[RMDB]
RNA sequence: GGGAACGACUCGAGUAGAGUCGAAAACUAUGUUGUCACAAAAUGUCGUUGGCGGAGACCGAAUCUACAAGGAUGAAUGUCUCAAACCAUUAAAGCGAAGCAUGCCGGUAUCUACCUCCAACCCCUGCAUGAAAGUGUCCUUCGGGACACUUUCAUGAAAAGAAACAACAACAACAAC
Reactivity to 2A3 in 0.01 (KOAc 150mM, MgCl2 10mM, bicine 150mM(pH8.5), 24C), signal-to-noise 2, nucleotides 027 to 126: c030u030a120u200g000u070u050g050u080c000a020c030a090a130a050a000u080g020u070c050g020u000u040g020g020c100g030g000a020g010a030c040c000g030a020a030u000c040u220a180c160a190a040g120g000a030u050g050a130a000u110g000u000c000u000c030a100a130a060c010c000a020u160u280a030a030a070g060c050g040a080a040g050c010a020u150g040c020c000g030g000u020a000u030c000u010a190c000c000u000c020c000a000a000c000c000c000c070u000g000
Reactivity to DMS in 0.01 (KOAc 150mM, MgCl2 10mM, bicine 150mM(pH8.5), 24C), signal-to-noise 1, nucleotides 027 to 126: c020u000a060u060g100u000u000g000u000c120a140c070a000a100a030a090u000g070u040c000g000u000u000g000g050c130g000g000a030g020a040c010c170g010a070a010u000c000u000a080c240a090a220g020g010a080u000g000a040a010u030g110u010c000u000c010a040a110a130c060c040a080u050u070a070a100a140g060c050g080a150a130g020c000a060u000g000c070c000g040g000u000a030u000c060u030a020c010c050u010c030c060a070a170c090c040c000c000u060g000
The record gives the reactivity of an RNA of 177 nucleotides to 2A3 and DMS. The DMS profile rests on 1,151 reads. The RNA was probed in 150 mM KOAc, 10 mM MgCl2 and 150 mM bicine (pH 8.5) at 24 C. DMS adducts were read by reverse transcription with MarathonRT. As a SHAPE reagent, 2A3 marks flexible, mostly unpaired nucleotides at the ribose 2'-OH.